The data come from the RNA Mapping Database (RMDB), library OK2TST.
This 177-nucleotide RNA was probed chemically with 2A3 and DMS.
2A3 adducts were read by reverse transcription with SuperScript II with manganese.
The DMS profile rests on 2,060 reads.

RNA sequence: GGGAACGACUCGAGUAGAGUCGAAAACGAUGCCUUUUCCGCCGCUCACCGCGCCCAUGCCUCGACUGAAGGUCUGGCCCAUGUCCUGCCUGCCUUCGCGGGCCGCGCCAUGCAGGCUGAGCUUGAAAGCGGAAAAUACUUUCGAGUAUUUUCCGCUAAAAGAAACAACAACAACAAC
Reactivity to 2A3 in 0.01 (KOAc 150mM, MgCl2 10mM, bicine 150mM(pH8.5), 24C), signal-to-noise 1, nucleotides 027 to 126: c040g070a060u150g020c030c010u050u030u030u000c000c000g030c000c020g020c040u000c010a040c030c030g000c010g040c000c040c010a050u110g000c010c020u190c050g100a300c080u160g030a040a000g040g040u070c210u010g030g020c000c050c010a100u140g070u020c010c020u050g000c000c000u010g020c000c010u000u000c000g000c020g040g000g000c000c030g030c000g000c000c000a070u110g040c020a020g020g000c040u020g020a000g030c060u030u050g140a210a130
Reactivity to DMS in 0.01 (KOAc 150mM, MgCl2 10mM, bicine 150mM(pH8.5), 24C), signal-to-noise 2, nucleotides 027 to 126: c120g000a060u000g000c030c030u010u000u010u000c010c050g030c090c060g010c070u010c070a090c040c070g000c070g030c030c080c080a060u010g030c000c010u010c040g020a120c080u030g030a070a050g010g020u000c090u000g010g000c020c110c080a040u010g000u000c060c040u020g010c020c020u010g020c010c110u000u000c080g010c010g000g000g020c020c120g020c140g030c030c060a100u000g010c070a080g010g010c070u000g020a120g030c010u010u000g000a050a110
The 2A3 profile rests on 1,374 reads.
For DMS the reverse transcriptase was MarathonRT.
Conditions: 150 mM KOAc, 10 mM MgCl2 and 150 mM bicine (pH 8.5), 24 C.